[RMDB]
RNA sequence: GGGAACGACUCGAGUAGAGUCGAAAAGAGACGAAGCAUCUAUUAGCACGUGCGGUAUAACGCGCAACGCACGUGCGAUAAGCGCGUUAGCACGUGUAAUCACGUGCGAUAAUAGAUGCGAAGUCAAGCGCAAAUAUUUGUUCGCAAAUAUUUGCGCAAAAGAAACAACAACAACAAC
Reactivity to 2A3 in 0.01 (KOAc 150mM, MgCl2 10mM, bicine 150mM(pH8.5), 24C), signal-to-noise 2, nucleotides 027 to 126: g150a000g030a020c020g100a100a000g010c000a030u000c000u000a000u010u010a000g010c000a000c030g020u030g000c010g020g020u090a060u020a190a010c000g050c010g000c070a100a000c000g010c000a010c060g090u080g000c000g010a010u000a000a010g020c000g000c000g010u050u030a010g020c020a000c020g010u020g070u140a020a010u300c000a000c000g000u000g000c000g000a000u000a070a000u000a000g000a000u000g010c000g020a020a000g000u000c000a000a030
Reactivity to DMS in 0.01 (KOAc 150mM, MgCl2 10mM, bicine 150mM(pH8.5), 24C), signal-to-noise 2, nucleotides 027 to 126: g020a250g030a000c000g000a130a300g000c000a040u000c000u000a000u000u000a180g030c000a000c000g000u000g000c010g000g050u020a020u030a090a100c000g000c030g010c030a100a070c030g000c010a040c070g090u010g000c000g020a020u000a060a060g000c060g030c010g000u010u010a130g000c050a060c020g000u000g000u080a040a080u050c000a010c050g000u010g020c030g000a130u020a000a000u000a020g000a020u000g000c000g000a090a300g000u000c000a050a140